Chemical mapping of a 177-nucleotide RNA with DMS. Conditions: 150 mM KOAc, 10 mM MgCl2 and 150 mM bicine (pH 8.5), 24 C. DMS adducts were read by reverse transcription with MarathonRT.

RNA sequence: GGGAACGACUCGAGUAGAGUCGAAAAGGUCGCUCGUUCGCGAGCGACCAAAGAGAUUGGCCAGGCCGGCCAGGCCGGAAAAUAGAAAUACAAAAAGAAAAAAAAGCAUUCGGUUCGCCGAAUGCAAGAUUCCCAUAAUGUUCGCAUUAUGGGAAUCAAAAGAAACAACAACAACAAC
Reactivity to DMS in 0.01 (KOAc 150mM, MgCl2 10mM, bicine 150mM(pH8.5), 24C), signal-to-noise 1, nucleotides 027 to 126: g010g000u020c000g080c000u000c000g070u000u030c210g020c000g000a010g030c000g050a000c000c000a000a030a060g000a110g010a070u000u010g000g000c010c010a120g040g060c090c140g070g050c100c050a050g020g010c010c000g050g000a030a040a040a020u020a040g000a090a060a160u000a070c050a040a030a110a160a130g040a100a000a050a160a140a160a070a100g000c000a010u000u000c010g000g000u000u010c260g000c000c000g000a000a000u000g020c000a000a040